[RMDB]
RNA sequence: GGGAACGACUCGAGUAGAGUCGAAAAUCCUAAGUCGCUCCGCAGAUACAUACUGCAUUCACUGAUGCGUGAUAAGCUUCCGAUAAGUGUCGGAAACGACACUUUUGACGGAAGUAUCACGCAUCAGUGAAUGCAGUAUGUGUAGGAGCGAUAUGGACGCUUAAGAAAAGUUCGCUUUUCUUAAGCGAAAAGAAACAACAACAACAAC
Reactivity to DMS in 0.01 (KOAc 150mM, MgCl2 10mM, bicine 150mM(pH8.5), 24C), signal-to-noise 2, nucleotides 027 to 156: u000c000c000u010a060a160g020u000c000g000c000u000c000c000g000c190a210g000a140u010a050c000a010u000a010c000u000g000c000a020u000u000c010a010c010u010g000a020u010g000c000g040u010g000a020u000a040a140g000c010u000u000c000c000g030a200u000a010a040g030u000g020u000c000g040g010a100a070a220c020g010a040c010a010c000u000u000u000u000g020a270c130g030g030a030a010g040u000a000u000c010a000c000g030c000a010u000c000a010g010u000g010a010a000u000g010c000a010g000u010a010u000g040u000g010u000a120g020g000a030g010c010g010a000u000a030u000g010g000a300
This 207-nucleotide RNA was probed chemically with DMS. It was measured as part of the RMDB library RNAMAK. For DMS the reverse transcriptase was MarathonRT. Reactivities are given for positions 27 through 156.